Structure probing data (DMS) for a 177-nucleotide construct. Values cover nucleotides 27 to 126. Source: RMDB library TTRINS, as collected in RNAgym. The reactions ran in a buffer of 150 mM KOAc, 10 mM MgCl2 and 150 mM bicine (pH 8.5), at 24 C.
RNA sequence: GGGAACGACUCGAGUAGAGUCGAAAAGAUAUGGACUGUCGAUGUUGCGAUGACGGUAGGGAGCUGGGUAUCGGAAACGAUACCAACAGCAUCGAUCUAUUCAUCGCAACAUCGACAGUCCUAAGUCCCUAUAUCAAAUGUUCGCAUUUGAUAUAGGAAAAGAAACAACAACAACAAC
Reactivity to DMS in 0.01 (KOAc 150mM, MgCl2 10mM, bicine 150mM(pH8.5), 24C), signal-to-noise 5, nucleotides 027 to 126: g020a080u010a300u000g000g000a010c000u010g020u010c000g020a020u010g010u000u000g020c000g020a020u000g020a030c300g010g010u000a040g010g010g000a030g020c000u000g000g000g020u000a000u010c000g000g010a180a120a130c000g010a000u000a000c010c010a050a130c030a010g000c010a210u000c070g000a040u010c010u010a070u000u010c000a000u000c000g000c010a010a000c010a000u000c000g000a010c010a010g000u000c000c000u000a010a070g000u000c030